[RMDB]
This 177-nucleotide RNA was probed chemically with 2A3 and DMS. 2A3 is a SHAPE reagent: it acylates the 2'-hydroxyl of flexible nucleotides of all four kinds. Source: RMDB library TTRINS, as collected in RNAgym. For DMS the reverse transcriptase was MarathonRT.

RNA sequence: GGGAACGACUCGAGUAGAGUCGAAAAGAUAUGGAGAUGGAACUACAAGCCCGAUGAGGCGACGAAGACAGAGAGAUCGGAAACGAUCUCUCUGUCAGAGCCUCAUGGCUUGCCAUCUCCUAAGUCAGACAUAGGAAGACUUCGGUCUUCCUAUGUCAAAAGAAACAACAACAACAAC
Reactivity to 2A3 in 0.01 (KOAc 150mM, MgCl2 10mM, bicine 150mM(pH8.5), 24C), signal-to-noise 1, nucleotides 027 to 126: g070a060u070a040u060g030g010a030g010a000u020g000g000a110a080c080u180a090c300a020a000g000c000c050c140g040a030u010g000a000g020g070c040g210a090c170g180a300a070g030a020c060a000g000a020g000a040g010a000u000c020g040g020a030a040a010c000g010a000u020c000u020c000u000c010u010g020u000c000a010g010a000g050c000c000u000c000a000u020g010g000c010u000u000g000c020c000a020u030c000u000c000c020u020a020a000g000u030c020a020
Reactivity to DMS in 0.01 (KOAc 150mM, MgCl2 10mM, bicine 150mM(pH8.5), 24C), signal-to-noise 2, nucleotides 027 to 126: g000a020u000a240u000g000g020a000g000a010u020g030g010a150a040c070u010a300c000a000a000g010c030c020c300g020a060u010g000a010g000g010c000g000a150c210g000a140a080g000a010c000a010g010a040g000a020g010a010u000c000g010g000a040a050a160c000g020a020u000c000u010c010u000c000u000g020u010c000a020g000a120g000c000c000u010c000a000u000g000g000c000u010u000g000c000c010a000u000c000u000c000c000u000a010a050g000u000c020a070